[RMDB]
RNA sequence: GGGAACGACUCGAGUAGAGUCGAAAAGUCAAGAUGUGUAGGAUAGGUGGGAGGCUUUGAAGUGUGGACGCCAGUCUGCAUGGAGCCGACCUUCAAAUACCACCCUUUAAUGGAAAAACAAAGUGAAGAGACAUACCAGAUUCGUCUGGUAUGUCUCAAAAGAAACAACAACAACAAC
Reactivity to 2A3 in 0.01 (KOAc 150mM, MgCl2 10mM, bicine 150mM(pH8.5), 24C), signal-to-noise 1, nucleotides 027 to 126: g060u040c020a000a050g050a210u130g180u050g060u130a060g060g030a100u060a070g030g040u020g020g000g010a070g020g000c040u290u280u060g080a060a030g010u000g010u010g000g000a010c000g000c050c040a050g010u000c000u000g020c010a010u000g050g000a030g030c000c000g050a010c000c040u000u120c000a020a040a020u080a050c000c010a010c010c000c000u030u080u080a130a070u240g110g050a010a080a030a000a100c090a060a140a020g080u150g090a110a080
Reactivity to DMS in 0.01 (KOAc 150mM, MgCl2 10mM, bicine 150mM(pH8.5), 24C), signal-to-noise 2, nucleotides 027 to 126: g030u000c060a050a090g030a060u000g000u000g040u030a040g010g010a060u000a110g010g000u000g000g000g000a300g020g000c120u000u000u020g020a110a100g020u000g020u010g000g000a020c000g020c230c160a110g020u000c040u010g000c020a010u000g000g010a020g000c000c010g020a110c030c020u000u000c020a050a080a090u000a070c030c010a030c010c040c070u000u010u010a080a040u010g000g000a050a030a060a050a050c130a040a080a120g000u000g000a080a180

The record gives the reactivity of an RNA of 177 nucleotides to 2A3 and DMS. 2A3 adducts were read by reverse transcription with SuperScript II with manganese. Reactivities are rounded to 0.1 and cut off at 0 and 3. The RNA was probed in 150 mM KOAc, 10 mM MgCl2 and 150 mM bicine (pH 8.5) at 24 C.